[RMDB]
RNA sequence: GGGAACGACUCGAGUAGAGUCGAAAAAGUACCUAUCGAAACUUCGUUGCCUCAACCUUGGUUGAGAGAAGUUUUGCCUUUCGUCUCAAUACCUGAUGACGUCAACGGAUUCGUCUUCUCGAACGCAGGAUAGAAUUCCUUUCGAGGAAUUCUAUCCAAAAGAAACAACAACAACAAC
Reactivity to DMS in 0.01 (KOAc 150mM, MgCl2 10mM, bicine 150mM(pH8.5), 24C), signal-to-noise 3, nucleotides 027 to 126: a080g010u010a110c080c050u030a110u010c050g010a030a020a000c030u000u000c000g010u010u000g030c260c020u000c010a030a030c010c060u000u000g030g000u000u020g000a050g030a140g000a010a010g020u000u000u000u000g010c270c070u000u000u010c020g000u000c030u000c030a080a140u000a140c180c120u020g000a040u000g000a030c020g030u010c050a040a090c110g020g000a180u000u000c010g000u000c080u000u000c010u000c030g020a080a090c170g020c140a130
Reactivity to 2A3 in 0.01 (KOAc 150mM, MgCl2 10mM, bicine 150mM(pH8.5), 24C), signal-to-noise 4, nucleotides 027 to 126: a000g110u090a080c020c010u060a120u150c050g010a030a000a010c020u000u000c020g120u090u170g140c000c000u020c010a030a030c010c010u090u300g120g000u020u010g020a020g010a000g010a020a000g000u040u020u030u100g050c010c020u070u100u050c020g070u020c000u040c010a130a190u170a270c030c040u050g020a060u140g010a010c030g020u040c030a070a060c080g040g000a050u060u050c010g060u000c020u120u020c040u020c040g100a100a030c070g010c140a070